[RMDB]
RNA sequence: GGGAACGACUCGAGUAGAGUCGAAAAUUGACGCGCGAGGAGGUCCGCGCCGUGCAUGGGUUCCGGGAGCAGGCGUGGAAGCUGUUUGGGUCGGUGGGGGCUCCGCGGGCGUUUCUCGGGGCCGCGCCACCUGAUGUUGGUUCGCCAACAUCAGGUGAAAAGAAACAACAACAACAAC
Reactivity to DMS in 0.01 (KOAc 150mM, MgCl2 10mM, bicine 150mM(pH8.5), 24C), signal-to-noise 1, nucleotides 027 to 126: u020u010g030a060c040g010c050g000c010g020a070g030g000a120g010g000u000c020c020g010c050g000c010c020g040u010g010c040a090u010g020g020g020u010u000c010c040g020g000g000a070g020c080a110g000g010c010g040u000g000g010a070a110g020c070u000g020u010u010u000g020g010g010u000c080g020g040u000g030g020g040g020g000c020u000c020c020g000c160g000g000g020c210g000u010u020u020c030u000c010g020g000g010g010c040c020g000c100g020c060